[RMDB]
RNA sequence: GGGAACGACUCGAGUAGAGUCGAAAAGAUAUGGACUGAAUGCUCGAUAAGUCCGGGUCGGAAACGACCCAGGACUUUUGACGAGCGCGUCCUAAGUCAAAGACGUGGCACUUCGGUGCCACGUCAACUCUUGUUCUUACUUCGGUAAGAACAAGAGAAAAGAAACAACAACAACAAC
Reactivity to 2A3 in 0.01 (KOAc 150mM, MgCl2 10mM, bicine 150mM(pH8.5), 24C), signal-to-noise 1, nucleotides 027 to 126: g010a000u070a040u220g000g030a010c040u150g120a300a120u230g030c010u000c020g110a160u070a220a010g000u000c000c000g040g000g000u000c000g000g000a090a020a030c000g000a000c000c040c010a020g000g020a010c000u050u070u050u160g190a050c030g000a000g050c030g010c000g010u000c020c010u010a200a040g030u030c010a180a040a140g010a000c000g050u000g000g020c000a010c000u050u080c300g080g000u000g000c010c010a000c000g000u010c000a000a000
Reactivity to DMS in 0.01 (KOAc 150mM, MgCl2 10mM, bicine 150mM(pH8.5), 24C), signal-to-noise 2, nucleotides 027 to 126: g000a060u010a300u000g000g010a030c020u030g010a060a110u020g010c000u010c000g020a140u010a030a010g000u000c000c010g010g020g010u000c000g020g000a150a070a150c000g000a010c000c010c010a010g030g000a030c000u000u000u000u000g000a260c090g010a030g000c000g010c080g000u000c010c000u000a050a160g010u000c020a060a130a140g000a020c000g030u000g000g000c020a010c000u000u000c220g030g010u000g000c000c010a000c000g020u000c010a010a040
Record summary:
Conditions: 150 mM KOAc, 10 mM MgCl2 and 150 mM bicine (pH 8.5), 24 C. An RNA of 177 nucleotides, treated with 2A3 and DMS and read out base by base. DMS adducts were read by reverse transcription with MarathonRT. Values are in units of 0.01, from 0 to 300, in steps of 10. The data come from the RNA Mapping Database (RMDB), library TTRDEL.